The data come from the RNA Mapping Database (RMDB), library M2PK90. This 177-nucleotide RNA was probed chemically with 2A3 and DMS. The DMS profile rests on 1,695 reads. Values cover nucleotides 27 to 126. DMS adducts were read by reverse transcription with MarathonRT.
RNA sequence: GGGAACGACUCGAGUAGAGUCGAAAAUUAAAGCAGGAGGAGGAGUGUGUGUCUUCCCAGCUGCUGAGUAGAACCUCCGCACACACGCGAAAGCUACGAGCAGCAGCAGUGCGGAAACGGUGAAAAACCAAUAGCCAAUCUUCGGAUUGGCUAUUGGAAAAGAAACAACAACAACAAC
Reactivity to 2A3 in 0.01 (KOAc 150mM, MgCl2 10mM, bicine 150mM(pH8.5), 24C), signal-to-noise 1, nucleotides 027 to 126: u090u040a060a000a030g020c000a000g010g090a090g040g000a010g000g040a020g100u210g040u070g050u030g080u120c010u020u010c040c000c010a050g110c030u010g000c010u020g020a030g070u170a050g050a010a010c000c030u020c000c000g010c020a040c000a000c000a010c070g020c000g030a090a080a000g050c020u070a060c270g110a030g160c020a000g000c010a000g000c010a000g040u030g000c030g000g020a050a100a020c060g000g040u050g040a060a060a030a000a000
Reactivity to DMS in 0.01 (KOAc 150mM, MgCl2 10mM, bicine 150mM(pH8.5), 24C), signal-to-noise 2, nucleotides 027 to 126: u040u000a050a120a030g000c000a030g010g000a090g000g010a060g020g000a030g000u000g010u010g020u000g020u010c020u000u000c000c010c050a150g030c010u010g000c010u010g000a070g020u010a050g020a130a080c010c010u000c010c000g010c000a030c010a090c110a050c140g020c020g010a110a130a120g000c010u000a080c120g000a150g030c050a060g020c180a100g000c010a130g020u000g050c000g000g000a010a010a010c170g010g000u010g000a030a050a070a130a130